[RMDB]
RNA sequence: GGGAACGACUCGAGUAGAGUCGAAAAUACAAGAAGGGGGGACGGAGAAGGCUAUGUUGGCCGGGCGACGGUUGUCCCGGUUUAAGCGUGUAGGCUGGUUUUCCAGGCAAAUCCGGUAGAAAAUGAAUGUCUAAACAACUUUCGAGUUGUUUAGACAAAAAGAAACAACAACAACAAC
Reactivity to DMS in 0.01 (KOAc 150mM, MgCl2 10mM, bicine 150mM(pH8.5), 24C), signal-to-noise 2, nucleotides 027 to 126: u000a060c050a050a060g010a110a100g010g000g020g010g010g010a030c040g000g010a070g010a100a130g010g020c060u000a030u020g010u010u000g030g010c000c020g010g000g020c300g010a060c100g000g010u010u010g000u000c010c000c000g010g000u000u000u000a040a100g020c040g030u010g000u000a070g000g000c020u000g010g000u010u000u000u010c020c010a140g010g000c080a010a100a070u010c020c030g000g000u000a040g000a110a050a140a090u010g000a110a140
This 177-nucleotide RNA was probed chemically with DMS. For DMS, 1,067 sequencing reads were counted. High DMS reactivity at an A or C suggests that its Watson-Crick edge is free. It was measured as part of the RMDB library M2PK90.